[RMDB]
RNA sequence: GGGAACGACUCGAGUAGAGUCGAAAAGAAACGCAAGGCCGCUGACCGACGGGAUAUUGUGGGGCUUACCACAGGGGACGCUGCGUUAUCACUUGCCUUUUAAGCCGACCGUCUGGGCUGCAUACAAACCACCCAACUAUCUUCGGAUAGUUGGGAACAUUUUGCAGUAGUUCGCUACUGCAAAAUGAAAAGAAACAACAACAACAAC
Reactivity to DMS in 0.01 (KOAc 150mM, MgCl2 10mM, bicine 150mM(pH8.5), 24C), signal-to-noise 3, nucleotides 027 to 156: g000a050a080a070c050g000c030a070a080g010g010c010c030g020c040u000g020a120c070c010g000a070c020g010g010g020a130u010a060u000u000g010u000g010g020g010g040c100u010u000a080c070c050a070c060a080g000g020g000g030a110c050g040c050u010g000c070g010u000u000a080u000c070a040c050u000u000g010c000c080u020u010u010u000a010a120g010c030c010g020a070c020c030g010u000c060u000g000g010g000c010u000g010c090a160u010a100c090a090a110a070c050c050a130c000c000c000a020a020c010u000a000u000c000u000u000c300g040g000a020u000a010g010u000u000g010g000g010a010a020
Reactivity to 2A3 in 0.01 (KOAc 150mM, MgCl2 10mM, bicine 150mM(pH8.5), 24C), signal-to-noise 5, nucleotides 027 to 156: g010a010a030a000c040g020c050a040a070g090g010c040c010g050c090u050g050a070c010c040g010a010c030g000g060g030a040u080a100u190u110g000u050g000g030g020g060c050u090u140a060c010c030a020c040a050g000g010g000g030a010c030g020c070u040g010c010g050u070u060a120u100c040a030c100u020u110g030c000c010u120u120u030u060a070a020g000c010c010g040a070c010c000g020u020c050u030g030g020g000c020u030g000c010a050u100a140c070a030a070a030c050c030a040c010c010c000a000a000c000u000a000u020c010u020u020c120g060g000a000u000a010g010u000u000g000g000g000a000a000